Chemical mapping of a 207-nucleotide RNA with 2A3. The reactions ran in a buffer of 150 mM KOAc, 10 mM MgCl2 and 150 mM bicine (pH 8.5), at 24 C. For 2A3 the reverse transcriptase was SuperScript II with manganese. It was measured as part of the RMDB library RNAMAK. For 2A3, 742 sequencing reads were counted.

[RMDB]
RNA sequence: GGGAACGACUCGAGUAGAGUCGAAAACGAGCCGUUUCGACGGCUCGAAAAAAACCUUUGUGCGAAGGCGAGCAACAGCGUAAGUGGUUCCCAUUGGGAACCCUUACGACAUGCUCCCUUCGCACUCUGGUAAAAAAGUCGAAUUUCGAUUCGACAACCUGGAGAGAAACUUCGGUUUCUCUCCAGGAAAAGAAACAACAACAACAAC
Reactivity to 2A3 in 0.01 (KOAc 150mM, MgCl2 10mM, bicine 150mM(pH8.5), 24C), signal-to-noise 1, nucleotides 027 to 156: c060g000a010g000c000c000g000u020u060u120c200g160a040c000g000g000c000u000c000g000a000a000a040a000a000a000a000c000c000u000u030u010g000u000g000c000g010a010a000g020g030c240g070a000g040c010a010a120c160a160g060c000g000u000a010a000g050u140g300g010u010u010c050c000c100a190u260u300g000g000g000a000a000c000c000c020u000u000a000c020g070a010c000a000u020g000c000u000c000c000c000u000u010c000g000c000a000c000u000c000u000g000g000u040a020a020a020a020a020a020g010u000c000g020a000a010u000u180u190c130g070a040u040u010c010g000a010c000a010a030